Source: RMDB library TTRDEL, as collected in RNAgym. The record gives the reactivity of an RNA of 177 nucleotides to DMS and 2A3. Values cover nucleotides 27 to 126. The 2A3 profile rests on 2,379 reads. The RNA was probed in 150 mM KOAc, 10 mM MgCl2 and 150 mM bicine (pH 8.5) at 24 C. For 2A3 the reverse transcriptase was SuperScript II with manganese. The DMS profile rests on 997 reads.
[RMDB]
RNA sequence: GGGAACGACUCGAGUAGAGUCGAAAAAAAAAAGAUAUGGAUCUAACCGAAACGUGAACUACUCUCGGGUCGGAAACGAUCUCUAGCGUGGAGCACGAGAUAGCUGUUAGAUCCUAAGUCAAAAAAAGAAUUACAUAACCUUCGGGUUAUGUAAUUCAAAAGAAACAACAACAACAAC
Reactivity to DMS in 0.01 (KOAc 150mM, MgCl2 10mM, bicine 150mM(pH8.5), 24C), signal-to-noise 1, nucleotides 027 to 126: a000a040a070a110a040a230g000a010u020a300u000g000g000a020u000c010u000a030a020c000c030g010a050a090a050c010g010u000g010a030a030c010u000a030c000u000c030u000c250g010g010g020u000c000g000g020a010a080a130c010g030a020u000c000u000c030u000a050g020c120g000u010g010g020a040g000c000a010c000g040a030g000a050u000a050g050c120u000g000u020u000a050g010a000u000c010c010u010a000a090g000u000c020a020a000a030a110a040a030a070
Reactivity to 2A3 in 0.01 (KOAc 150mM, MgCl2 10mM, bicine 150mM(pH8.5), 24C), signal-to-noise 1, nucleotides 027 to 126: a000a000a000a000a000a070g020a030u100a050u120g010g000a000u000c000u000a000a010c070c020g050a120a030a030c020g020u000g000a000a030c010u030a000c000u020c000u000c040g000g010g000u010c040g020g000a070a070a000c010g000a030u040c150u040c010u120a010g000c000g000u010g040g040a070g070c030a010c020g030a070g080a180u130a070g060c110u060g020u010u000a000g010a010u000c010c000u000a060a010g040u010c070a080a060a030a060a000a000a170